[RMDB]
Notes:
The record gives the reactivity of an RNA of 177 nucleotides to DMS and 2A3. DMS adducts were read by reverse transcription with MarathonRT.

RNA sequence: GGGAACGACUCGAGUAGAGUCGAAAACCGCUACUCUUCGGAGUAGCGGAUACAUCUCGGGUCCGGGCCUUAGCGUAGGACCAACGGUAAGGCCAGAGAUGAAGGGAGAGAUUUUCGAAUCUCUCAAUGCUACCUAUUAAUUCGUUAAUAGGUAGCAAAAAGAAACAACAACAACAAC
Reactivity to DMS in 0.01 (KOAc 150mM, MgCl2 10mM, bicine 150mM(pH8.5), 24C), signal-to-noise 8, nucleotides 027 to 126: c000c000g010c000u000a000c000u000c000u000u020c190g020g010a020g010u000a000g010c010g010g000a020u010a060c030a010u000c000u000c000g000g010g000u020c030c040g020g000g000c000c000u000u000a010g000c010g010u000a080g010g010a110c160c140a050a020c010g000g010u000a010a010g000g010c000c000a070g010a020g010a010u000g010a180a130g010g010g000a010g000a020g010a010u000u000u000u020c160g010a030a020u000c000u000c000u000c010a060a060
Reactivity to 2A3 in 0.01 (KOAc 150mM, MgCl2 10mM, bicine 150mM(pH8.5), 24C), signal-to-noise 6, nucleotides 027 to 126: c000c000g000c000u010a010c000u030c010u030u100c280g120g000a010g000u000a000g000c000g000g000a000u010a010c010a010u000c010u000c000g070g020g100u050c030c020g030g020g000c000c000u020u010a090g090c000g030u030a060g070g300a120c050c010a000a000c010g030g100u010a000a000g000g000c000c030a020g010a000g000a020u030g050a090a080g170g130g000a010g000a000g000a010u000u020u040u110c170g090a080a000u000c000u000c000u000c000a000a010

The RNA was probed in 150 mM KOAc, 10 mM MgCl2 and 150 mM bicine (pH 8.5) at 24 C. DMS (dimethyl sulfate) methylates the pairing face of unpaired adenines and cytosines. 2A3 adducts were read by reverse transcription with SuperScript II with manganese.